[RMDB]
An RNA of 307 nucleotides, treated with 2A3 and DMS and read out base by base.
Values cover nucleotides 27 to 266.
Values are in units of 0.01, from 0 to 300, in steps of 10.
RNA sequence: GGGAACGACUCGAGUAGAGUCGAAAAGAAAAUGGCCGCUUUUCUGGAUUCAUCGACUGUGGCCGGCUGGGUGUGGCGGACCGCUAUCAGGACAUAGCGUUGGCUACCCGUGAUAUUGCUGAAGAGCUUGGCGGCGAAUGGGCUGACCGCUUCCUCGUGCUUUACGGUAUCGCCGCUCCCGAUUCGCAGCGCAUCGCCUUCUAUCGCCUUCUUGACGAGUUCUUCUGAGCGGGACUCUGGGGUUCGAAAUGACCGACCAAGCGACGCGAUCUAAAUUCGUUUAGAUCAAAAGAAACAACAACAACAAC
Reactivity to 2A3 in 0.01 (KOAc 150mM, MgCl2 10mM, bicine 150mM(pH8.5), 24C), signal-to-noise 2, nucleotides 027 to 266: g010a000a130a010a010u060g020g000c020c000g040c030u150u060u070u050c060u090g070g070a110u110u090c050a070u210c120g070a070c020u020g020u010g060g000c000c000g020g000c070u150g000g000g020u040g000u030g020g000c020g010g020a000c020c000g000c040u060a040u060c010a010g040g030a020c000a140u060a030g000c010g000u020u030g050g010c000u030a070c020c000c000g000u010g010a090u090a080u160u130g010c050u050g020a070a050g040a020g090c020u050u030g100g000c030g000g000c020g040a060a120u140g020g010g000c000u000g030a030c050c060g000c020u060u050c010c010u040c030g050u060g040c010u160u170u110a060c020g000g020u050a190u230c010g010c000c000g000c010u000c000c020c000g000a120u100u090c060g000c050a050g030c000g020c050a020u040c010g000c000c000u020u030c030u050a070u050c000g010c000c000u100u100c080u160u090g040a030c050g020a020g010u020u020c000u090u020c020u070g050a000g000c040g010g020g070a070c000u000c090u110g080g020g000g010u090u090c030g030a010a040a200u150g020a030c000c000g060a060c000c020a040a000g030c000g060a050c020g030c010
Reactivity to DMS in 0.01 (KOAc 150mM, MgCl2 10mM, bicine 150mM(pH8.5), 24C), signal-to-noise 4, nucleotides 027 to 266: g000a040a040a060a070u000g010g000c000c010g020c090u000u010u000u000c030u000g010g010a180u010u020c070a100u000c070g010a110c100u010g000u000g000g010c020c050g020g030c140u010g010g010g010u000g010u000g010g020c010g000g000a030c040c010g020c200u000a030u010c110a070g000g010a100c300a120u010a050g010c030g020u000u000g000g010c030u000a110c170c020c010g020u010g000a070u010a060u010u000g000c050u010g000a110a070g000a130g000c040u000u000g000g010c080g010g010c030g010a080a070u010g010g000g000c020u010g010a040c150c050g020c060u000u000c100c040u010c120g010u000g000c080u020u000u010a110c010g000g010u000a060u000c020g010c010c010g010c030u000c000c000c020g000a090u020u020c070g000c040a060g020c040g010c070a050u010c070g020c000c010u010u020c100u000a110u000c080g010c040c020u000u000c060u000u000g000a080c060g010a080g000u000u010c010u000u010c080u010g000a090g020c070g010g010g010a060c030u010c070u000g000g010g000g020u010u010c060g020a060a070a120u010g000a120c040c020g000a140c040c030a060a080g000c050g010a090c110g000c100